[RMDB]
RNA sequence: GGGAACGACUCGAGUAGAGUCGAAAACAUGUCCGUCGGCGUAGCCGACAACAUGCCCAGGUAGCCCAGACCUUCAAGGCUACGGUGCGUUGCGACGCACGGUCUGAUUCUUCACAACGACGUUCACAAGAUCGGAUCACUUUCGAGUGAUCCGAAAAGCUAUUUGGAGGUUCGCCUCCAAAUAGCUAAAAGAAACAACAACAACAAC
Reactivity to 2A3 in 0.01 (KOAc 150mM, MgCl2 10mM, bicine 150mM(pH8.5), 24C), signal-to-noise 1, nucleotides 027 to 156: c010a000u000g030u050c080c100g000u000c070g000g000c230g180u260a030g000c000c000g000a000c000a000a000c000a000u020g040c010c010c020a040g000g000u000a010g080c000c050c100a000g000a020c000c000u000u000c000a000a020g000g010c000u000a010c000g000g000u010g050c000g000u010u060g060c300g050a010c000g060c000a000c000g000g000u000c000u000g020a060u050u050c090u130u100c120a070c030a220a100c090g160a060c040g100u150u020c070a040c030a190a140g070a210u000c000g010g000a010u000c000a000c020u000u100u080c050g030a000g010u000g000a000u010c020c000g000a000a000a000